Chemical mapping of a 207-nucleotide RNA with DMS and 2A3. The RNA was probed in 150 mM KOAc, 10 mM MgCl2 and 150 mM bicine (pH 8.5) at 24 C. 2A3 adducts were read by reverse transcription with SuperScript II with manganese.
[RMDB]
RNA sequence: GGGAACGACUCGAGUAGAGUCGAAAAACUGCCAUACGUGGCAGAAACACGCCUUACCAGGACUAAACAGCGUGUCUAAAAAACAGUACUUCAUACCUGAUCUGGAGGGUAGAUCAGGAAUACUAAAAAAAUCGGGUGAAGUUCGCUUCACCCGAAACUUAAAUGGCUAGUUCGCUAGCCAUUUAAGAAAAGAAACAACAACAACAAC
Reactivity to DMS in 0.01 (KOAc 150mM, MgCl2 10mM, bicine 150mM(pH8.5), 24C), signal-to-noise 1, nucleotides 027 to 156: a110c000u000g000c010c000a040u000a080c180g070u020g000g050c000a060g000a150a040a020c000a020c020g090c000c020u010u000a150c060c020a210g040g020a300c110u000a070a060a170c180a070g010c010g070u000g000u000c020u020a000a070a040a210a060a090c050a080g000u010a120c120u010u000c050a140u000a130c000c020u000g000a010u000c020u020g010g020a100g010g000g000u020a070g000a020u000c010a070g040g000a030a020u010a110c080u000a000a000a150a100a020a150a030u000c000g000g000g020u000g020a030a040g000u000u000c230g020c030u000u010c000a020c000c000c010g000a000a000a010
Reactivity to 2A3 in 0.01 (KOAc 150mM, MgCl2 10mM, bicine 150mM(pH8.5), 24C), signal-to-noise 3, nucleotides 027 to 156: a000c000u000g010c000c000a010u030a080c190g050u030g010g000c010a010g010a000a000a010c010a000c010g010c000c010u070u050a030c040c030a060g090g070a080c060u140a070a130a020c020a040g000c000g010u000g020u060c100u110a070a060a030a010a000a010c040a020g100u080a050c040u040u120c030a060u060a140c010c000u010g010a010u000c000u020g060g030a040g040g010g040u050a010g000a000u000c010a000g010g040a000a010u080a050c070u140a000a020a010a000a000a080a130u030c000g000g000g000u000g010a000a000g000u040u070c130g040c050u000u000c000a000c000c000c000g000a000a000a000